[RMDB]
RNA sequence: GGGAACGACUCGAGUAGAGUCGAAAAGGUGCGAUGUUCGCAUCGCACCAAAGAAGCUCAAAAUGACGCAAACAACGGCGUCAGCGUGAGCAAACCCGGAAAAAACCACUUGGUUCGCCAAGUGGAAGAUCUCUUGACGGUUCGCCGUCAAGAGAUCAAAAGAAACAACAACAACAAC
Reactivity to 2A3 in 0.01 (KOAc 150mM, MgCl2 10mM, bicine 150mM(pH8.5), 24C), signal-to-noise 1, nucleotides 027 to 126: g000g010u000g000c000g000a000u000g030u010u080c110g000c080a020u000c000g000c000a000c000c000a000a000a000g000a020a010g050c000u010c000a060a030a010a080u030g000a000c000g000c000a040a300a210c040a140a120c170g060g000c000g000u000c000a000g020c020g070u100g010a000g010c000a020a020a010c020c000c040g000g000a180a180a000a010a000a020c020c000a000c000u000u000g090g020u020u090c240g000c060c000a000a000g000u000g020g010a000a020
Reactivity to DMS in 0.01 (KOAc 150mM, MgCl2 10mM, bicine 150mM(pH8.5), 24C), signal-to-noise 1, nucleotides 027 to 126: g000g020u000g000c000g020a030u010g000u040u020c160g010c000a000u000c000g000c000a040c000c000a000a020a070g000a080a210g020c000u030c000a020a100a100a060u000g010a060c000g020c000a020a130a290c150a050a070c290g020g000c010g000u000c000a030g000c290g000u000g010a030g000c020a040a090a080c010c000c000g000g000a000a010a090a070a230a120c020c000a010c010u010u000g000g000u000u000c200g030c000c000a000a000g000u000g010g030a040a020
The record gives the reactivity of an RNA of 177 nucleotides to 2A3 and DMS.
The reactions ran in a buffer of 150 mM KOAc, 10 mM MgCl2 and 150 mM bicine (pH 8.5), at 24 C.
Reactivities are given for positions 27 through 126.
High DMS reactivity at an A or C suggests that its Watson-Crick edge is free.
It was measured as part of the RMDB library M2PK50.